[RMDB]
RNA sequence: GGGAACGACUCGAGUAGAGUCGAAAAUUUGACUUACAUAAAUGUCUGGGAUAGUAAAAUCUAUCAUAUUGAGCGGACCAUCUGGUUUAGGAAAGACAGCCAUAGCCAAAAGACUGUUAAAAGACUAUGGGAAUAUAUUUGGAUUUGUGGUGUCCCAAGACUAAAGCAGAUUCGUCUGCUUUAGUCUAAAAGAAACAACAACAACAAC
Reactivity to 2A3 in 0.01 (KOAc 150mM, MgCl2 10mM, bicine 150mM(pH8.5), 24C), signal-to-noise 1, nucleotides 027 to 156: u060u010u110g030a020c020u030u120a020c040a180u160a160a190a030u110g030u030c060u090g070g050g000a000u030a040g050u070a020a070a130a190u050c000u010a010u020c030a030u030a040u110u090g070a030g060c030g020g000a000c000c000a050u030c040u080g070g010u090u110u050a050g060g000a090a040a040g000a020c020a000g000c030c000a000u010a000g000c000c020a020a150a000a000g030a030c060u040g050u090u050a000a140a030a030g040a030c030u030a070u040g020g060g000a090a010u070a000u000a020u030u100u070g030g010a030u040u040u060g020u040g000g070u030g010u060c030c000c000a020
Reactivity to DMS in 0.01 (KOAc 150mM, MgCl2 10mM, bicine 150mM(pH8.5), 24C), signal-to-noise 1, nucleotides 027 to 156: u000u000u000g010a110c030u010u000a170c060a150u010a060a110a150u040g020u020c060u020g020g020g020a010u000a050g030u000a070a130a110a070u000c020u000a040u010c110a150u000a150u000u010g010a070g030c060g000g030a140c020c060a080u000c070u000g020g000u020u000u000a070g040g000a080a070a080g000a020c000a040g010c000c000a050u000a000g000c030c040a080a090a110a180g010a060c060u010g020u000u010a060a150a090a230g020a050c000u000a020u000g010g000g000a090a080u000a000u000a020u000u020u000g020g010a100u000u000u000g050u000g010g020u000g000u000c000c020c000a190